[RMDB]
The data come from the RNA Mapping Database (RMDB), library OK3TST.
Structure probing data (DMS and 2A3) for a 207-nucleotide construct.
For DMS, 6,940 sequencing reads were counted.

RNA sequence: GGGAACGACUCGAGUAGAGUCGAAAAGCCACCGUUCGGCAACUGCGACAUGAACGCUGCCAACGGUUUGACCGCAACACAAUUCGCUGCCGAGCUGGGCAUCGAAGCAUCACACGGAGAGGACGGUCUGUUGUCUGCAUUGACCCCUGACGAACAGACUUACCAACAUAUUCGUAUGUUGGUAAGUAAAAGAAACAACAACAACAAC
Reactivity to DMS in 0.01 (KOAc 150mM, MgCl2 10mM, bicine 150mM(pH8.5), 24C), signal-to-noise 3, nucleotides 027 to 156: g000c020c010a040c000c020g030u000u000c040g070g040c010a030a040c020u010g030c020g000a300c140a160u000g040a160a080c070g010c020u000g050c010c030a060a070c000g020g020u000u010u010g020a020c020c030g000c040a070a110c080a120c060a070a220u000u000c040g010c060u000g040c020c030g020a140g020c070u000g000g020g010c050a060u010c030g000a090a050g000c050a100u000c050a120c050a120c060g000g000a160g000a150g040g010a070c030g010g000u000c020u000g010u000u000g010u000c010u000g070c050a180u010u000g010a170c040c010c000c020u000g030a130c070g000a070a110c070a120g000
Reactivity to 2A3 in 0.01 (KOAc 150mM, MgCl2 10mM, bicine 150mM(pH8.5), 24C), signal-to-noise 4, nucleotides 027 to 156: g030c010c000a010c040c000g020u020u040c100g020g010c050a160a090c110u090g010c020g030a060c080a220u230g080a220a060c050g010c010u000g020c000c010a010a010c010g020g000u010u030u090g020a010c000c010g020c030a090a080c060a030c020a120a150u060u030c010g000c010u030g030c010c010g090a100g090c090u170g010g090g000c000a020u040c030g040a040a020g040c020a060u110c020a030c040a050c070g050g020a090g010a030g060g030a040c020g020g010u000c040u040g040u040u040g020u030c050u030g000c030a110u070u120g080a140c030c020c000c020u050g040a080c060g030a070a020c020a030g050
The RNA was probed in 150 mM KOAc, 10 mM MgCl2 and 150 mM bicine (pH 8.5) at 24 C.